[RMDB]
About this RNA: Structure probing data (2A3 and DMS) for a 177-nucleotide construct. The RNA was probed in 150 mM KOAc, 10 mM MgCl2 and 150 mM bicine (pH 8.5) at 24 C. Source: RMDB library OK2TRN, as collected in RNAgym. For DMS the reverse transcriptase was MarathonRT. For 2A3 the reverse transcriptase was SuperScript II with manganese.

RNA sequence: GGGAACGACUCGAGUAGAGUCGAAAACUGCGUCAGCGGCUGGCCGACUCUCUGACCAGGCAGCAGGAGCUGGAGACGCGGCAGAAGCUGUCAUCAAUUCUGGGGGAGUCCCGGACAACGGUGGUGGGUGUCCAAAUCAAUUCGUUGAUUUGGACACAAAAGAAACAACAACAACAAC
Reactivity to 2A3 in 0.01 (KOAc 150mM, MgCl2 10mM, bicine 150mM(pH8.5), 24C), signal-to-noise 2, nucleotides 027 to 126: c000u020g020c000g030u010c010a040g050c000g060g050c120u030g100g000c020c020g070a080c010u000c010u000c040u090g070a130c010c040a100g050g040c010a010g000c020a020g040g130a050g030c050u040g110g000a090g040a050c120g000c050g160g000c030a030g010a100a020g010c010u000g020u030c020a060u050c030a070a260u190u120c080u100g010g010g000g040g000a080g060u070c000c040c030g020g000a060c020a090a020c050g050g000u010g040g040u040g040g090
Reactivity to DMS in 0.01 (KOAc 150mM, MgCl2 10mM, bicine 150mM(pH8.5), 24C), signal-to-noise 3, nucleotides 027 to 126: c020u000g010c090g020u000c020a050g000c050g010g000c050u010g000g040c010c050g020a100c030u000c020u010c020u000g020a160c050c060a120g010g010c050a050g010c020a090g000g020a180g000c030u000g010g000a110g020a080c200g000c010g010g020c020a040g020a160a090g010c010u010g000u000c020a110u020c100a070a160u000u010c060u010g000g010g000g020g010a110g010u010c030c050c030g010g000a050c060a050a050c090g020g020u000g030g020u010g020g000